The record gives the reactivity of an RNA of 177 nucleotides to 2A3 and DMS. 2A3 adducts were read by reverse transcription with SuperScript II with manganese.
[RMDB]
RNA sequence: GGGAACGACUCGAGUAGAGUCGAAAAUCGAGGGGUACGUCGCCACUGGCCGCUGAAAAGUGGUGUGGCACUGCUCCGGCGAGGACGUGGGCGGACCGGCGGGAUGGGCUCCAGUCACCGGCUCGGUCGAACAAUCUAAUUUCGAUUAGAUUGUUCGAAAAGAAACAACAACAACAAC
Reactivity to 2A3 in 0.01 (KOAc 150mM, MgCl2 10mM, bicine 150mM(pH8.5), 24C), signal-to-noise 9, nucleotides 027 to 126: u090c040g020a050g010g020g000g010u030a050c170g020u070c150g010c000c000a010c020u030g200g010c000c000g000c010u040g030a050a060a040a020g010u020g010g020u070g000u000g050g000c000a000c000u010g000c000u000c000c000g000g040c010g010a020g020g010a020c040g050u090g000g000g040c050g010g020a050c050c020g040g020c110g020g020g010a050u080g030g030g000c010u020c030c010a030g050u040c020a020c050c020g020g000c020u030c040g040g020u020
Reactivity to DMS in 0.01 (KOAc 150mM, MgCl2 10mM, bicine 150mM(pH8.5), 24C), signal-to-noise 6, nucleotides 027 to 126: u010c020g010a300g000g000g000g010u000a000c200g020u000c160g020c010c000a010c010u040g010g020c000c010g010c010u010g010a080a050a140a020g030u000g010g030u000g030u010g000g000c000a010c010u000g000c000u000c000c000g010g010c030g000a060g000g000a130c120g020u000g000g000g010c110g000g000a070c080c040g010g000c060g000g000g010a100u010g010g010g010c030u020c060c050a090g010u010c050a080c040c030g000g000c020u000c040g000g000u000

For DMS the reverse transcriptase was MarathonRT.
Reactivities are given for positions 27 through 126.